[RMDB]
RNA sequence: GGGAACGACUCGAGUAGAGUCGAAAAGAUAGCCGUUAAUCAUAUUGCUGCUCUGCAUAAUAGAUUUCCACUAACCUACCACUUCAAGAAAGUUGGACAGUUCCAGAAAUGGGACGAGGGAGGUAGACGUGCACGUACUGUUCGCAGUACGUGCACGAAAAGAAACAACAACAACAAC
Reactivity to DMS in 0.01 (KOAc 150mM, MgCl2 10mM, bicine 150mM(pH8.5), 24C), signal-to-noise 1, nucleotides 027 to 126: g000a030u000a110g000c040c000g000u000u000a100a020u000c180a090u020a080u020u010g000c050u000g010c020u000c100u000g000c060a020u000a020a120u000a060g020a230u000u010u000c040c010a130c060u000a020a280c020c000u000a110c000c010a080c070u000u000c020a110a120g000a110a050a040g010u010u000g000g000a040c290a140g020u000u000c000c000a000g000a080a110a150u000g020g000g000a010c000g010a110g000g000g000a150g000g000u000a030g050a140